Structure probing data (2A3 and DMS) for a 177-nucleotide construct. For 2A3 the reverse transcriptase was SuperScript II with manganese. High 2A3 reactivity points to a flexible backbone, as in loops and unpaired stretches. Source: RMDB library OK1LIB, as collected in RNAgym. Values cover nucleotides 27 to 126.
RNA sequence: GGGAACGACUCGAGUAGAGUCGAAAAGUCACCUGCAUGCUGCUCGGCGAAGAUGCGAUCGCUAAGCGCGGAUCGGUCGGCAGGGUGAUCCCGACCGUCGCCGCAAGGGUGGUCGAUCAGAACAUGAAUCCUUGAGUCAUUUCGAUGACUCAAGGAUAAAAGAAACAACAACAACAAC
Reactivity to 2A3 in 0.01 (KOAc 150mM, MgCl2 10mM, bicine 150mM(pH8.5), 24C), signal-to-noise 4, nucleotides 027 to 126: g070u050c040a070c100c000u030g020c070a020u110g020c040u030g030c030u040c050g050g000c020g010a070a010g020a040u110g190c010g020a020u000c000g010c020u050a100a070g090c030g000c000g090g010a080u170c000g010g000u000c000g020g010c070a120g060g110g070u140g040a110u150c000c010c000g000a000c000c000g020u080c110g000c070c010g030c020a040a030g220g000g000u020g010g000u000c000g000a050u060c090a020g070a060a020c020a050u120g120a090
Reactivity to DMS in 0.01 (KOAc 150mM, MgCl2 10mM, bicine 150mM(pH8.5), 24C), signal-to-noise 2, nucleotides 027 to 126: g020u000c040a100c040c030u010g000c080a100u000g030c000u030g010c060u010c020g000g010c030g000a100a130g000a040u010g000c000g030a050u030c030g000c000u020a140a300g000c260g000c030g040g040a040u040c010g030g020u000c110g000g000c110a090g000g040g000u020g010a070u010c090c000c010g000a000c000c010g000u040c210g000c000c020g020c020a150a130g010g030g010u000g010g000u010c020g000a080u010c050a030g040a090a020c130a060u000g000a180